Structure probing data (2A3 and DMS) for a 177-nucleotide construct. Reactivities are given for positions 27 through 126.

[RMDB]
RNA sequence: GGGAACGACUCGAGUAGAGUCGAAAAAUCAUACUGGAUAGUAGAAUGAGGUGUCACGGUCUCUGCUAUCUAGUAUGAGUACCACAGGUAGACUAGAUUGUGAUACCUCAUGUCUAUCCGUGGUAAAGUAACAGUAUGUAUUCGUACAUGCUGUUACAAAAGAAACAACAACAACAAC
Reactivity to 2A3 in 0.01 (KOAc 150mM, MgCl2 10mM, bicine 150mM(pH8.5), 24C), signal-to-noise 9, nucleotides 027 to 126: a000u050c010a010u020a020c010u030g000g000a000u000a000g030u010a010g060a190a040u030g000a000g010g020u040g030u040c020a010c030g030g000u000c010u000c010u020g000c000u000a000u000c000u000a000g000u000a000u010g000a000g010u020a020c000c020a010c020a010g000g000u000a000g000a040c000u000a010g000a030u010u040g010u010g030a020u020a030c000c000u000c000a010u030g010u000c000u000a000u000c000c010g010u020g000g020u030a040a050a010
Reactivity to DMS in 0.01 (KOAc 150mM, MgCl2 10mM, bicine 150mM(pH8.5), 24C), signal-to-noise 9, nucleotides 027 to 126: a070u020c050a050u010a040c060u020g000g000a000u000a010g000u020a070g010a080a030u010g000a020g000g010u010g010u010c030a030c030g000g000u000c010u000c090u000g010c000u000a000u000c000u000a090g010u000a010u010g010a080g010u010a020c050c080a050c070a020g010g000u000a000g000a090c020u010a060g000a020u000u000g010u010g000a040u010a030c010c020u000c010a020u000g000u000c000u000a000u000c000c010g020u010g000g000u010a040a070a090
For 2A3, 86,635 sequencing reads were counted. The DMS profile rests on 97,432 reads. DMS adducts were read by reverse transcription with MarathonRT.